RNA sequence: GGGAACGACUCGAGUAGAGUCGAAAAUUAAAGAUCGAAACAUCGCGAAACUCGCCGGCGCCGCUGUAGGCGGACCUUCAGCGACAGCGCCAGAACGAAUAAGGUCCGCAGUACGAAAGUACAAAAACCUAACCUACAAGUUCGCUUGUAGGUUAGGAAAAGAAACAACAACAACAAC
Reactivity to 2A3 in 0.01 (KOAc 150mM, MgCl2 10mM, bicine 150mM(pH8.5), 24C), signal-to-noise 1, nucleotides 027 to 126: u080u050a190a060a000g060a050u140c050g040a010a090a080c030a080u100c060g010c010g100a170a180a140c080u020c020g040c040c020g020g010c000g000c020c000g030c000u010g010u020a020g300g000c000g020g000a010c010c000u020u000c010a010g000c000g040a040c050a020g000c000g010c000c010a060g040a070a050c080g050a060a060u090a070a000g000g000u000c000c000g000c000a000g000u000a000c010g010a120a020a020g000u010a010c070a010a100a000a000a000
Reactivity to DMS in 0.01 (KOAc 150mM, MgCl2 10mM, bicine 150mM(pH8.5), 24C), signal-to-noise 2, nucleotides 027 to 126: u020u000a040a070a060g000a080u030c030g010a160a060a110c200a050u000c050g030c040g040a100a100a120c090u000c050g040c020c030g010g050c010g010c070c020g000c030u010g000u000a030g040g000c010g000g030a030c000c000u000u000c020a040g010c010g010a080c140a120g030c030g000c000c000a080g010a060a110c140g010a080a100u000a000a030g040g050u000c000c000g020c030a200g020u000a010c010g030a160a110a230g030u010a000c000a010a050a050a140a050
The record gives the reactivity of an RNA of 177 nucleotides to 2A3 and DMS. It was measured as part of the RMDB library M2PK90. For DMS, 931 sequencing reads were counted. For 2A3, 2,136 sequencing reads were counted.